The record gives the reactivity of an RNA of 177 nucleotides to 2A3. Conditions: 150 mM KOAc, 10 mM MgCl2 and 150 mM bicine (pH 8.5), 24 C. The 2A3 profile rests on 331 reads. The data come from the RNA Mapping Database (RMDB), library OK1LIB.
[RMDB]
RNA sequence: GGGAACGACUCGAGUAGAGUCGAAAAAAAGUGCGAUUCGGGGUAAGAUUGAAUCUAGAGAUGAGACCGUCCCUCAAAGUGUUAGGGAGGCAUUCAACAAUCUAAACAGUACCACUUCACUAACUGAAUCUCCGUUACCCUUCGGGGUAACGGAGAUAAAAGAAACAACAACAACAAC
Reactivity to 2A3 in 0.01 (KOAc 150mM, MgCl2 10mM, bicine 150mM(pH8.5), 24C), signal-to-noise 1, nucleotides 027 to 126: a000a000a000g230u150g080c080g030a300u020u030c000g180g000g030g110u130a040a040g000a130u000u020g210a210a210u000c020u020a200g000a000g050a200u050g000a070g050a040c070c000g190u180c000c000c000u030c030a290a300a030g100u160g110u160u040a000g110g000g000a000g000g130c000a030u000u020c000a000a020c080a030a030u190c020u130a190a190a000c030a060g010u090a020c070c080a000c000u000u050c130a030c170u270a300a000c140u000g000a030